[RMDB]
RNA sequence: GGGAACGACUCGAGUAGAGUCGAAAAUCUGCGGCGCGGCGCCGGUACCCGAGGCGCUGCUGCUCUGGUAUCGCCGCCUGGGCCUGGACGUGCUCGAGGUCUACGGGAUGACCGAGAACAGCGGCUAAAUACUCGCUAUAUUCGUAUAGCGAGUAUUAAAAGAAACAACAACAACAAC
Reactivity to 2A3 in 0.01 (KOAc 150mM, MgCl2 10mM, bicine 150mM(pH8.5), 24C), signal-to-noise 3, nucleotides 027 to 126: u030c010u100g070c010g040g000c070g020c030g080g060c010g010c040c020g010g020u030a040c000c000c020g010a020g020g050c050g000c010u010g000c000u010g000c000u000c020u030g030g000u020a010u060c030g020c080c010g010c000c020u060g000g030g000c000c000u040g070g030a040c080g160u180g020c060u010c030g070a020g010g000u020c030u060a040c050g010g040g010a030u110g070a060c020c030g040a030g020a050a020c010a000g020c000g020g010c020u010a050
Reactivity to DMS in 0.01 (KOAc 150mM, MgCl2 10mM, bicine 150mM(pH8.5), 24C), signal-to-noise 8, nucleotides 027 to 126: u000c060u000g020c070g010g010c060g010c080g010g010c030g020c150c010g010g000u000a060c010c010c040g010a090g000g010c050g010c010u000g000c010u000g010c010u000c010u000g020g010u000a040u000c040g020c120c010g000c060c100u000g010g000g000c020c010u000g010g010a040c070g020u010g020c110u000c010g000a070g000g010u000c010u000a110c070g010g000g000a100u000g000a100c010c010g010a160g000a070a050c040a040g000c010g010g010c040u010a060
Conditions: 150 mM KOAc, 10 mM MgCl2 and 150 mM bicine (pH 8.5), 24 C. Chemical mapping of a 177-nucleotide RNA with 2A3 and DMS. It was measured as part of the RMDB library OK2TST. Reactivities are rounded to 0.1 and cut off at 0 and 3. 2A3 adducts were read by reverse transcription with SuperScript II with manganese.